[RMDB]
RNA sequence: GGGAACGACUCGAGUAGAGUCGAAAAUGCAAUGAGUGUUUGGUCUAGUUUGAACACUAGGAAAAGAAGAAUGCCACAGUCUAGGUACCAUUAAAGUCCACCUUGAGAAAGUGCUCUUUAAUUUGAAGUUUGAGUGAUUAGAAAAUGUUCACCAAUAUGAUUUAAUGCGAUUCGUCGCAUUAAAUCAAAAAGAAACAACAACAACAAC
Reactivity to 2A3 in 0.01 (KOAc 150mM, MgCl2 10mM, bicine 150mM(pH8.5), 24C), signal-to-noise 6, nucleotides 027 to 156: u090g000c040a020a080u090g010a050g060u050g020u040u080u080g040g010u030c000u020a040g030u010u050u170g110a060a010c000a000c050u010a010g040g040a050a060a010a040g090a040a000g030a040a020u070g030c020c000a040c030a030g030u030c030u050a020g030g020u030a030c010c020a010u050u070a120a020a000g010u010c010c010a010c020c010u030u020g040a050g020a110a040a000g010u020g010c000u000c010u030u090u020a110a150u090u080u120g110a090a020g030u040u060u050g040a040g010u020g010a020u020u070a030g090a060a120a010a040u100g040u020u020c010a020c060c010a030a040u120a090
Reactivity to DMS in 0.01 (KOAc 150mM, MgCl2 10mM, bicine 150mM(pH8.5), 24C), signal-to-noise 2, nucleotides 027 to 156: u010g000c080a080a150u000g000a150g030u020g030u000u000u000g010g010u000c030u010a100g010u000u000u010g030a090a100c090a050c030u000a090g010g000a090a050a060a120g000a110a060g010a090a100u020g020c030c030a130c030a120g030u000c060u010a080g010g010u000a080c060c020a150u000u010a020a020a030g000u000c050c010a040c040c020u000u020g020a240g000a100a120a120g010u000g010c010u000c040u000u000u000a040a030u000u000u000g010a070a110g010u000u000u010g000a130g010u000g000a060u000u000a110g000a110a070a030a080u010g000u010u000c020a080c000c030a020a070u000a160
The record gives the reactivity of an RNA of 207 nucleotides to 2A3 and DMS. For 2A3, 4,593 sequencing reads were counted. 2A3 adducts were read by reverse transcription with SuperScript II with manganese.